Structure probing data (DMS and 2A3) for a 177-nucleotide construct. Conditions: 150 mM KOAc, 10 mM MgCl2 and 150 mM bicine (pH 8.5), 24 C. The data come from the RNA Mapping Database (RMDB), libraries RFM100 and RFMREP. Values cover nucleotides 27 to 126.

[RMDB]
RNA sequence: GGGAACGACUCGAGUAGAGUCGAAAAGGUAAACACAGGGAUUUUGCAAGUCAGGCUCCUGGCUGGAGUCCAGCUUUCAGCUGGGUCCAGGCUCUAGCCAGGGCCUGACUGCAUGAUGCUCAGUAGACUACAUGAUAGGCUUCGGCCUAUCAUGUAGAAAAGAAACAACAACAACAAC
Reactivity to DMS in 0.01 (KOAc 150mM, MgCl2 10mM, bicine 150mM(pH8.5), 24C), signal-to-noise 3, nucleotides 027 to 126: g020g010u020a070a070a080c130a040c080a090g010g000g000a060u000u000u010u000g020c000a020a120g010u000c010a000g010g010c010u050c000c010u010g010g020c000u000g000g020a010g000u010c000c000a000g000c000u000u030u010c250a030g000c020u010g000g000g020u030c140c190a190g020g000c000u000c000u010a010g000c010c000a010g000g000g000c000c000u010g000a000c000u000g010c020a010u000g000a010u000g010c010u010c050a080g010u000a080g010a250
Reactivity to 2A3 in 0.01 (KOAc 150mM, MgCl2 10mM, bicine 150mM(pH8.5), 24C), signal-to-noise 2, nucleotides 027 to 126: g060g020u100a040a100a010c080a020c070a140g000g030g000a010u040u030u020u000g010c040a180a100g000u000c000a000g000g000c060u130c230c000u010g000g000c000u010g000g010a010g010u110c080c000a000g000c010u060u300u270c170a030g000c000u000g000g020g010u090c070c020a040g110g020c000u000c010u010a000g000c000c000a000g000g000g000c010c000u010g000a000c000u000g000c000a000u000g000a000u070g070c000u010c030a020g000u050a020g060a070